[RMDB]
The record gives the reactivity of an RNA of 177 nucleotides to DMS and 2A3. Reactivities are given for positions 27 through 126. The data come from the RNA Mapping Database (RMDB), library OK1LIB. For 2A3 the reverse transcriptase was SuperScript II with manganese. The DMS profile rests on 9,877 reads. Conditions: 150 mM KOAc, 10 mM MgCl2 and 150 mM bicine (pH 8.5), 24 C.
RNA sequence: GGGAACGACUCGAGUAGAGUCGAAAAAGAUGGUGGCAAAUUUUAUUAGUUCGCAAAUUGCUGCGACAAAUGCAACGCAAGGUGCACAGGCGGCUGCAGCCAACGUAGUACCUGUACCACCGAGUCCUCCGGGUAAAUUAUUCGUAAUUUACCCGGAAAAAGAAACAACAACAACAAC
Reactivity to DMS in 0.01 (KOAc 150mM, MgCl2 10mM, bicine 150mM(pH8.5), 24C), signal-to-noise 5, nucleotides 027 to 126: a060g010a110u040g000g020u010g000g020c170a080a070a140u040u010u030u040a060u010u020a150g000u060u020c020g020c000a000a070a090u030u050g010c210u000g030c020g000a020c040a040a030a060u010g030c150a060a050c180g000c130a110a030g010g010u000g010c030a010c080a160g000g010c200g000g000c050u010g000c090a170g010c010c020a070a170c150g000u010a120g020u000a020c010c000u000g000u020a190c040c020a000c000c000g000a110g000u010c020c020
Reactivity to 2A3 in 0.01 (KOAc 150mM, MgCl2 10mM, bicine 150mM(pH8.5), 24C), signal-to-noise 7, nucleotides 027 to 126: a000g110a060u200g000g010u020g010g000c040a070a110a110u120u180u050u060a240u130u160a100g080u100u060c010g010c020a020a140a130u300u270g110c120u050g000c030g000a010c030a010a100a000u120g030c050a060a020c050g030c080a060a070g020g000u020g000c000a020c010a050g070g000c060g060g000c060u160g050c110a040g020c050c000a070a020c080g030u080a060g000u010a040c000c000u020g000u010a030c000c000a000c000c000g000a040g040u020c020c010